The record gives the reactivity of an RNA of 177 nucleotides to DMS and 2A3. For 2A3 the reverse transcriptase was SuperScript II with manganese. Conditions: 150 mM KOAc, 10 mM MgCl2 and 150 mM bicine (pH 8.5), 24 C. The 2A3 profile rests on 2,240 reads. For DMS, 5,755 sequencing reads were counted.

[RMDB]
RNA sequence: GGGAACGACUCGAGUAGAGUCGAAAAUUUUACGCUCCUUGCCUAUUAAUUAUCGCUUGCCUGCUGACGAUAUAACAAGCCUCAAGCAGUGCGUUCAAUCCUUUUUAUUCAGUAGAUAAAUUGGGGAUAACCUAUCAAACUUCGGUUUGAUAGGUUAAAAAGAAACAACAACAACAAC
Reactivity to DMS in 0.01 (KOAc 150mM, MgCl2 10mM, bicine 150mM(pH8.5), 24C), signal-to-noise 5, nucleotides 027 to 126: u000u000u010u000a090c160g010c020u000c050c030u000u000g000c030c020u000a060u010u000a070a120u010u010a050u000c030g020c030u000u010g010c030c020u000g020c030u000g010a080c050g010a050u000a040u010a080a110c190a090a160g000c040c070u010c130a040a080g010c030a040g010u000g020c040g020u010u010c100a080a100u010c000c010u000u010u010u000u000a010u010u010c030a160g010u010a130g000a020u000a000a020a030u000u010g010g000g010g010a180
Reactivity to 2A3 in 0.01 (KOAc 150mM, MgCl2 10mM, bicine 150mM(pH8.5), 24C), signal-to-noise 2, nucleotides 027 to 126: u030u030u000u070a060c050g030c030u010c010c000u030u060g050c000c020u130a160u170u110a210a070u130u100a040u060c010g010c000u000u080g020c000c010u040g030c020u020g020a030c030g020a020u010a000u010a160a060c070a070a040g020c000c020u070c020a050a000g000c010a010g030u050g170c020g000u040u070c030a060a070u050c000c000u040u050u010u010u030a070u060u090c020a040g090u090a020g170a030u030a030a070a040u040u030g000g000g000g000a020